[RMDB]
RNA sequence: GGGAACGACUCGAGUAGAGUCGAAAACAUACCCAGCAACAACAGCAAGGCGGGAAUCAACGGACGCUUUCUAACCACGAAGGUGCUUCAAGGUUACCCUUGCGUUGACCAGGUGUGCACGCUGGCCUAGUCCAUUAAGUUUCGACUUAAUGGACUAAAAAGAAACAACAACAACAAC
Reactivity to 2A3 in 0.01 (KOAc 150mM, MgCl2 10mM, bicine 150mM(pH8.5), 24C), signal-to-noise 8, nucleotides 027 to 126: c040a040u180a150c000c010c000a000g050c030a000a140c000a000a010c010a020g020c000a010a000g040g010c080g100g240g210a020a020u020c010a020a070c110g010g020a000c010g000c000u010u000u000c010u020a060a100c010c010a020c140g010a000a000g020g010u010g020c160u020u010c040a110a100g020g000u010u030a050c010c000c000u010u000g000c000g000u010u020g040a050c010c030a030g050g040u080g020u070g140c070a020c120g040c020u030g030g000c010c020
Reactivity to DMS in 0.01 (KOAc 150mM, MgCl2 10mM, bicine 150mM(pH8.5), 24C), signal-to-noise 9, nucleotides 027 to 126: c140a120u010a130c040c000c010a120g010c070a080a090c030a040a050c080a120g020c020a020a020g010g010c250g010g000g010a040a020u000c010a040a190c300g000g000a020c020g010c010u000u000u000c000u010a090a130c300c300a080c230g000a020a010g000g010u000g000c120u000u000c010a150a260g000g000u000u000a040c030c000c010u000u000g010c020g000u000u000g010a110c070c060a050g000g000u000g010u010g010c060a060c100g010c040u000g000g010c090c060